Chemical mapping of a 177-nucleotide RNA with 2A3 and DMS. 2A3 adducts were read by reverse transcription with SuperScript II with manganese. Conditions: 150 mM KOAc, 10 mM MgCl2 and 150 mM bicine (pH 8.5), 24 C.
RNA sequence: GGGAACGACUCGAGUAGAGUCGAAAAUACAACGUAUCCGUCUGCGAUAUAGUUAAACUAUCAUCUAAGCUCGAUAGGCACAGGCUUGUCAGCCCCUGAUCCAAUCUAUAGGAUUUUUACCUACCGCGAUUGUAACUCCUUUCGAGGAGUUAUAGUCAAAAGAAACAACAACAACAAC
Reactivity to 2A3 in 0.01 (KOAc 150mM, MgCl2 10mM, bicine 150mM(pH8.5), 24C), signal-to-noise 9, nucleotides 027 to 126: u090a010c030a040a010c030g040u030a030u020c030c030g110u070c210u140g050c100g030a010u010a010u020a110g040u030u120a080a130a070c050u060a040u140c040a010u020c070u100a080a040g030c020u050c090g040a030u040a050g010g000c030a060c050a130g190g000c020u050u070g040u060c020a010g020c020c000c000c030u030g020a030u010c020c010a050a050u010c040u160a110u100a140g050g000a030u080u030u020u100u130a100c010c010u030a060c020c050g080c040
Reactivity to DMS in 0.01 (KOAc 150mM, MgCl2 10mM, bicine 150mM(pH8.5), 24C), signal-to-noise 9, nucleotides 027 to 126: u010a110c110a060a060c050g010u000a030u000c010c020g010u000c120u010g010c120g010a040u000a020u000a060g010u000u010a050a090a160c080u000a050u000c090a060u000c050u010a120a130g010c080u000c100g010a050u000a040g010g010c060a080c160a080g000g010c030u000u000g010u000c080a080g010c030c020c030c070u000g000a050u000c040c020a060a080u010c110u010a110u010a080g000g010a040u000u000u000u010u010a090c030c020u000a070c100c070g020c220